This 177-nucleotide RNA was probed chemically with 2A3 and DMS. The data come from the RNA Mapping Database (RMDB), library M2PK90. The RNA was probed in 150 mM KOAc, 10 mM MgCl2 and 150 mM bicine (pH 8.5) at 24 C. For 2A3 the reverse transcriptase was SuperScript II with manganese. DMS adducts were read by reverse transcription with MarathonRT. Reactivities are given for positions 27 through 126.
[RMDB]
RNA sequence: GGGAACGACUCGAGUAGAGUCGAAAAAUAAAGAGCGUAAACGCGUCAUUGAGUGACGUGAAGAUCAUCCAAGUGUGCUGUCUACAGUCGUAGAUAGCGCACAUUAGGCUAAGAUGAUCAUAAAAAAUGACGACUGUUAGUUCGCUAACAGUCGUCAAAAAGAAACAACAACAACAAC
Reactivity to 2A3 in 0.01 (KOAc 150mM, MgCl2 10mM, bicine 150mM(pH8.5), 24C), signal-to-noise 1, nucleotides 027 to 126: a000u260a020a040a000g220a010g010c060g050u090a000a080a020c010g000c010g030u020c020a030u030u210g100a090g160u020g050a000c010g000u000g050a090a060g010a010u000c000a000u000c020c020a150a150g000u020g000u000g000c000u000g000u000c000u000a100c130a220g140u300c200g000u050a000g000a000u000a000g000c000g000c000a000c000a000u000u050a040g000g080c030u040a040a010g030a010u000g000a000u010c050a000u170a000a050a030a000a000a020
Reactivity to DMS in 0.01 (KOAc 150mM, MgCl2 10mM, bicine 150mM(pH8.5), 24C), signal-to-noise 1, nucleotides 027 to 126: a120u000a060a040a170g050a130g040c160g030u010a060a060a080c100g020c020g030u000c000a050u030u020g000a300g020u000g000a020c030g090u000g010a130a140g000a000u000c010a000u010c000c050a010a090g080u000g040u000g020c020u000g000u000c000u000a020c000a210g000u000c230g000u000a000g010a010u000a000g000c000g000c000a000c000a020u000u000a120g000g000c300u000a070a040g000a070u000g000a000u000c000a190u020a000a020a110a100a160a020